This 207-nucleotide RNA was probed chemically with 2A3. The 2A3 profile rests on 362 reads. The reactions ran in a buffer of 150 mM KOAc, 10 mM MgCl2 and 150 mM bicine (pH 8.5), at 24 C.
RNA sequence: GGGAACGACUCGAGUAGAGUCGAAAACUGGGCUAUGAUCCUCAAACACACUUGGUGAUGCCUGGCUUUUACACUAAUGAAGCAUUCCACCCAGAUAUAGUUUUAAGCCCCGGAUGUGCAAUAGACUUUACAAACAGCAGGUUAAAUAAUUUUUUGGGAUGUCCUCAACAUUCGUGUUGAGGACAUCAAAAGAAACAACAACAACAAC
Reactivity to 2A3 in 0.01 (KOAc 150mM, MgCl2 10mM, bicine 150mM(pH8.5), 24C), signal-to-noise 1, nucleotides 027 to 156: c010u040g020g020g000c040u080a060u190g020a050u020c020c020u200c060a100a250a000c090a020c010a010c140u040u060g010g000u030g000a030u060g060c000c040u020g050g000c020u130u100u020u200a120c130a050c030u050a060a070u210g110a040a000g000c000a000u100u080c010c010a030c030c000c000a010g060a050u080a020u030a160g090u110u010u020u090a060a030g000c110c000c000c050g130g000a040u050g050u030g000c010a080a230u050a080g010a070c000u070u210u190a050c150a040a300a000c000a020g070c000a040g000g070u110u030a160a140a000u060a100a090u050u220u090u030u060u010g090g040